[RMDB]
RNA sequence: GGGAACGACUCGAGUAGAGUCGAAAACACAGUCAGUUCUGCAUUUGCUGUGAACUUUUUGAGAUUGCUGCCCUGUGUGUGCAUGCCCAAGUACACAAACAGAGGAGAUUAAUUUUGUGGCUAGAAAGUAAAAUAGCCCAUUCGUGGGCUAUUUUACAAAAGAAACAACAACAACAAC
Reactivity to 2A3 in 0.01 (KOAc 150mM, MgCl2 10mM, bicine 150mM(pH8.5), 24C), signal-to-noise 1, nucleotides 027 to 126: c070a000c020a010g040u110c010a040g020u090u020c040u110g020c040a150u060u000u220g000c030u040g060u040g070a060a050c000u080u110u050u110u180g120a110g040a040u070u110g000c050u050g040c000c000c000u030g020u000g000u010g000u000g010c030a020u160g000c000c000c000a000a020g010u000a000c020a010c000a040a180a000c050a040g010a050g090g060a060g000a070u150u190a140a070u160u130u060u090g030u000g000g020c020u000a050g120a120a160a000
Reactivity to DMS in 0.01 (KOAc 150mM, MgCl2 10mM, bicine 150mM(pH8.5), 24C), signal-to-noise 1, nucleotides 027 to 126: c060a120c090a010g020u010c070a110g010u000u000c050u010g050c040a150u000u000u000g030c090u010g010u010g000a070a070c060u000u000u000u000u020g030a050g010a070u000u000g010c040u000g010c010c000c000u000g010u000g040u000g010u000g000c050a070u000g010c030c030c040a100a130g030u010a000c020a010c030a040a090a080c040a030g000a060g020g000a050g000a070u000u000a040a040u000u000u000u000g000u000g010g030c050u010a040g000a110a080a110